Conditions: 150 mM KOAc, 10 mM MgCl2 and 150 mM bicine (pH 8.5), 24 C. Structure probing data (2A3) for a 207-nucleotide construct. It was measured as part of the RMDB library M2RFPK.
RNA sequence: GGGAACGACUCGAGUAGAGUCGAAAAGUGAAAGCUCCUUCUCUCGCAAUGUGUAACGCAUGAUUCUCAUGACCCCUGGUUGGAGAGAUCCGGACUAGGAGCCAGGGGGCCUCUGAUUCUGCCAGCCAAAACUGUCGUAAGUUCGCUUACGACAGAACAAGUUACGCAACUUCGGUUGCGUAACUUGAAAAGAAACAACAACAACAAC
Reactivity to 2A3 in 0.01 (KOAc 150mM, MgCl2 10mM, bicine 150mM(pH8.5), 24C), signal-to-noise 1, nucleotides 027 to 156: g120u090g090a160a010a040g050c010u070c000c010u170u010c020u010c010u020c010g050c080a050a190u060g050u000g050u150a140a040c050g000c020a000u090g030a140u300u080c010u010c010a010u090g060a050c000c000c000c010u000g010g020u020u090g020g000a050g020a040g020a070u000c000c050g050g050a080c050u130a050g010g000a030g020c000c000a000g000g010g000g000g000c010c030u010c020u010g020a060u100u010c010u020g020c000c000a020g000c000c000a000a140a020a100c010u010g000u000c000g000u000a000a000g000u000u080c150g050c190u000u000a000c000g000a000c000a000g000a000a000